This 177-nucleotide RNA was probed chemically with 2A3 and DMS. Source: RMDB library OK2TRN, as collected in RNAgym. Reactivities are given for positions 27 through 126. The reactions ran in a buffer of 150 mM KOAc, 10 mM MgCl2 and 150 mM bicine (pH 8.5), at 24 C.

RNA sequence: GGGAACGACUCGAGUAGAGUCGAAAAGUUUCGAACAUUGAACAUAUUCACCACUAUGCGCAGCAAGGAGAUUUUCAGUUUUUCAAAGGUUGGAAGACAUCAUUUGAUGAAAUGGCUCCACACACGGGAAUCAGAUUAUCUUCGGAUAAUCUGAUUCAAAAGAAACAACAACAACAAC
Reactivity to 2A3 in 0.01 (KOAc 150mM, MgCl2 10mM, bicine 150mM(pH8.5), 24C), signal-to-noise 2, nucleotides 027 to 126: g000u010u030u080c020g050a100a010c040a120u070u140g030a030a020c010a020u140a070u070u120c040a080c120c000a000c060u100a120u130g050c050g010c030a060g040c050a070a090g050g010a050g020a070u100u020u060u090c030a010g020u090u000u080u000u040c040a060a000a000g050g000u040u040g040g050a040a070g100a080c020a020u060c000a030u060u110u170g090a070u050g020a010a040a050u060g040g020c010u000c000c010a050c000a000c010a010c040g110g110
Reactivity to DMS in 0.01 (KOAc 150mM, MgCl2 10mM, bicine 150mM(pH8.5), 24C), signal-to-noise 4, nucleotides 027 to 126: g010u010u000u000c020g030a100a140c140a090u010u010g010a070a080c070a070u010a080u010u000c060a110c040c030a080c130u010a070u000g010c110g030c050a040g020c050a090a110g020g000a110g000a130u010u000u010u010c040a070g000u000u000u020u000u020c040a020a050a040g000g000u000u000g010g010a080a080g020a100c040a030u010c000a060u020u000u000g010a050u010g010a040a020a040u010g000g000c030u000c030c010a060c120a080c150a080c170g000g000